This 207-nucleotide RNA was probed chemically with 2A3. It was measured as part of the RMDB library RNAMAK. 2A3 adducts were read by reverse transcription with SuperScript II with manganese. The 2A3 profile rests on 1,841 reads.
RNA sequence: GGGAACGACUCGAGUAGAGUCGAAAAGGGGUCGUAGCAUCGAUCGUUAUCCAGGCCUUGAAGUAGUCUGAAGCCUCCACGGACUAUGGAGCCUGGUAAGACGGGAGCUACGACGGAGGCACCCAAACUCAUUCACAUGUUCGCAUGUGAAUGAGAAGACUGUUGGAACGUUCGCGUUCCAACAGUCAAAAGAAACAACAACAACAAC
Reactivity to 2A3 in 0.01 (KOAc 150mM, MgCl2 10mM, bicine 150mM(pH8.5), 24C), signal-to-noise 2, nucleotides 027 to 156: g060g000g060g010u000c010g010u000a000g000c030a240u270c110g180a140u080c010g030u010u030a060u060c010c000a000g000g010c000c030u110u030g030a030a000g000u020a020g010u020c000u020g030a070a000g000c000c000u030c010c020a000c000g020g000a000c000u000a000u010g020g030a020g010c000c010u000g010g000u000a030a030g080a000c010g020g100g040a070g000c000u010a000c000g000a010c020g010g000a010g000g020c000a020c020c000c010a020a120a090c000u000c000a000u000u000c000a000c000a000u010g020u060u080c260g010c160a010u000g000u010g000a000a010u010g000a000g000a010a010